The record gives the reactivity of an RNA of 177 nucleotides to 2A3. The RNA was probed in 150 mM KOAc, 10 mM MgCl2 and 150 mM bicine (pH 8.5) at 24 C. The data come from the RNA Mapping Database (RMDB), library RFM100. The 2A3 profile rests on 444 reads.
RNA sequence: GGGAACGACUCGAGUAGAGUCGAAAAAGGUGCGGCUGCUGUGCCGCACCUGUGUCAGCAGGUGGCAGAGAGCAGUGCGGCUACGUCUACGCUCCGCGCCCUGGCACGUGGGCUUCGGAAUGAUUAGGGGCACAUGGAAUUUCGAUUCCAUGUGCCCAAAAGAAACAACAACAACAAC
Reactivity to 2A3 in 0.01 (KOAc 150mM, MgCl2 10mM, bicine 150mM(pH8.5), 24C), signal-to-noise 1, nucleotides 027 to 126: a000g000g050u000g000c000g000g000c000u080g120c010u180g120u220g210c000c000g060c020a000c010c000u000g000u000g000u000c000a000g000c010a020g060g010u160g070g110c070a010g250a000g000a000g000c000a000g000u020g140c000g000g010c230u210a110c090g010u050c010u040a000c000g000c000u000c000c000g000c000g000c000c000c000u000g000g000c000a000c000g030u100g010g000g000c000u110u170c070g000g030a060a110u010g000a120u140u120a090g050